This 207-nucleotide RNA was probed chemically with 2A3.
The reactions ran in a buffer of 150 mM KOAc, 10 mM MgCl2 and 150 mM bicine (pH 8.5), at 24 C.
For 2A3 the reverse transcriptase was SuperScript II with manganese.

RNA sequence: GGGAACGACUCGAGUAGAGUCGAAAAGGGGUCCGAAUGCUAGAGCCGAUGAAGAUAGGACAUGAUCUGAAGCCUCCACGGAUCAACAGCCUAUUGGAGGCUCUUGGACCAUUCGGACGGAGGCACCCAAAUGUCGCAACCUUCGGGUUGCGACAAACUACUUUCGGAACUUCGGUUCCGAAAGUAGAAAAGAAACAACAACAACAAC
Reactivity to 2A3 in 0.01 (KOAc 150mM, MgCl2 10mM, bicine 150mM(pH8.5), 24C), signal-to-noise 1, nucleotides 027 to 156: g080g000g020g000u000c000c000g020a000a000u000g010c010u000a010g010a000g000c000c040g300a300u020g000a020a000g010a030u010a020g050g000a040c300a300u300g000a000u000c000u000g000a030a000g010c000c000u000c000c000a000c010g000g000a000u000c030a100a080c030a070g000c000c000u000a000u030u000g010g000a000g000g000c010u000c000u000u070g000g000a010c000c010a000u000u000c000g000g000a000c040g000g000a000g010g000c000a010c010c000c000a030a030a060u090g000u010c000g000c050a000a000c010c010u150u220c300g120g000g000u010u000g000c000g000a000c000a000a000a000